Record summary: The record gives the reactivity of an RNA of 207 nucleotides to DMS and 2A3.

[RMDB]
RNA sequence: GGGAACGACUCGAGUAGAGUCGAAAAUCAGGUGAUGCUAAUGCUACUGGUCUUAGGACUCAGCUUUGAGAACCAAGGAUCUAGCAAACUCAGAUGAAAAAUUUAUAAUUCCUUUGUUUAGCAUGUUCAGCCAGCGGUUGUUUGGUUCAUCUGAGCAACCGCAUAAUAGGUUCGCCUAUUAUGCGGUAAAAGAAACAACAACAACAAC
Reactivity to DMS in 0.01 (KOAc 150mM, MgCl2 10mM, bicine 150mM(pH8.5), 24C), signal-to-noise 3, nucleotides 027 to 156: u000c050a060g020g030u010g000a070u010g010c040u000a070a090u000g020c000u010a060c020u000g000g030u000c010u010u000a280g030g020a300c000u010c030a090g020c120u010u000u000g000a070g000a040a190c010c020a080a190g000g030a050u010c010u000a070g010c020a070a090a080c030u000c020a030g000a030u020g000a030a060a080a170a130u000u000u010a110u010a130a180u000u000c020c020u000u000u010g000u000u010u000a050g000c040a080u000g030u000u010c060a090g010c010c020a050g010c050g020g020u000u000g020u040u000u000g000g010u000u010c020a000u000c000u000g000a020g020c050a120
Reactivity to 2A3 in 0.01 (KOAc 150mM, MgCl2 10mM, bicine 150mM(pH8.5), 24C), signal-to-noise 3, nucleotides 027 to 156: u040c020a020g030g020u040g020a020u060g010c030u090a150a030u110g000c000u000a010c090u050g030g000u020c020u060u060a060g000g030a050c030u030c070a090g060c080u240u190u120g050a050g000a070a100c020c020a010a040g010g000a000u000c030u020a010g020c020a060a010a060c040u020c020a000g000a040u040g030a070a040a040a080a100u190u290u140a210u080a090a160u080u080c030c000u060u050u090g060u020u060u040a020g010c030a030u040g050u140u120c070a030g010c000c010a040g020c040g090g000u070u060g020u030u070u050g040g010u030u020c000a000u010c010u000g020a000g020c010a030
Conditions: 150 mM KOAc, 10 mM MgCl2 and 150 mM bicine (pH 8.5), 24 C. For 2A3 the reverse transcriptase was SuperScript II with manganese. For DMS the reverse transcriptase was MarathonRT.